[RMDB]
RNA sequence: GGGAACGACUCGAGUAGAGUCGAAAAGUCACACGCCUCGUCUUCAUAGUCGUUGGUAUUAGCGCACCACCACGUAGCGAAGUCAGUGGAGCCACCAUACUUGGUUGUGUGCCAGUCUGUCUUGGGAACGGAGUUAUAGCAACAACGCCAGUGGAUGCUAGUUAGAUGCUUUCGAGCAUCUAACUAGAAAAGAAACAACAACAACAAC
Reactivity to DMS in 0.01 (KOAc 150mM, MgCl2 10mM, bicine 150mM(pH8.5), 24C), signal-to-noise 3, nucleotides 027 to 156: g010u010c030a090c040a060c050g000c010c000u010c030g000u010c060u000u000c080a160u000a100g020u000c040g030u000u000g030g010u000a090u000u010a090g050c040g030c060a090c000c000a060c030c000a040c080g030u000a060g020c070g010a060a110g010u010c070a110g030u000g020g000a120g030c030c010a070c020c000a090u000a070c090u000u000g020g010u000u020g040u000g030u010g010c000c040a100g020u000c040u000g020u010c030u010u010g010g020g030a100a120c080g030g010a070g020u000u000a140u000a130g010c060a080a100c040a040a060c020g000c040c020a130g040u000g020g020a170u020g010
Reactivity to 2A3 in 0.01 (KOAc 150mM, MgCl2 10mM, bicine 150mM(pH8.5), 24C), signal-to-noise 8, nucleotides 027 to 156: g100u060c030a030c010a010c100g040c010c010u020c020g050u000c040u130u080c080a140u080a150g030u050c060g030u030u060g020g000u080a150u120u140a050g010c030g000c010a020c000c000a010c000c010a030c050g050u060a020g060c030g110a090a010g090u100c060a020g040u080g080g050a040g050c020c020a050c010c010a040u080a110c050u050u060g030g010u040u070g020u010g030u030g000c020c010a030g030u000c020u030g050u010c020u060u120g030g000g010a040a020c020g020g020a020g030u050u070a100u060a120g030c020a000a080c010a030a030c060g050c030c030a030g020u030g070g020a030u090g040
An RNA of 207 nucleotides, treated with DMS and 2A3 and read out base by base. 2A3 adducts were read by reverse transcription with SuperScript II with manganese. Source: RMDB library OK3TST, as collected in RNAgym. For 2A3, 7,966 sequencing reads were counted. DMS adducts were read by reverse transcription with MarathonRT.